[RMDB]
Chemical mapping of a 177-nucleotide RNA with 2A3 and DMS.
RNA sequence: GGGAACGACUCGAGUAGAGUCGAAAACAAAGGCGAAAGUCGGCCGAAUGUCCGAGGGUCGCGCGGGGAUAGACUACCCGAGAGGGGAAAACAACCCUGGCUCCGGAGGCGGUGAAAAUAACAGGCGCAGAAAAGUCGUAUUCGUACGACUUUUCUGAAAAGAAACAACAACAACAAC
Reactivity to 2A3 in 0.01 (KOAc 150mM, MgCl2 10mM, bicine 150mM(pH8.5), 24C), signal-to-noise 4, nucleotides 027 to 126: c060a020a070a020g070g010c040g100a160a010a030g030u040c000g000g020c000c010g050a080a080u170g080u080c040c000g020a140g010g030g030u090c040g010c020g020c060g080g000g000g000a010u080a090g090a060c070u060a060c030c010c030g010a020g050a010g020g010g000g010a030a050a040a020c060a010a070c000c000c010u030g010g010c000u010c000c000g040g010a020g000g010c030g030g010u100g020a150a120a020a010u150a060a000c030a060g030g000c020g000
Reactivity to DMS in 0.01 (KOAc 150mM, MgCl2 10mM, bicine 150mM(pH8.5), 24C), signal-to-noise 2, nucleotides 027 to 126: c030a110a090a150g010g040c040g000a040a070a120g000u000c010g020g020c020c020g030a070a060u020g000u020c020c030g020a260g020g000g020u020c050g040c160g000c020g000g030g000g000a110u010a120g000a090c100u000a240c050c010c020g020a160g020a210g020g010g000g010a020a090a140a070c130a090a140c030c010c000u000g000g010c000u000c030c010g000g000a120g000g000c030g000g000u020g000a090a030a110a040u030a040a070c090a050g020g030c040g000
The RNA was probed in 150 mM KOAc, 10 mM MgCl2 and 150 mM bicine (pH 8.5) at 24 C.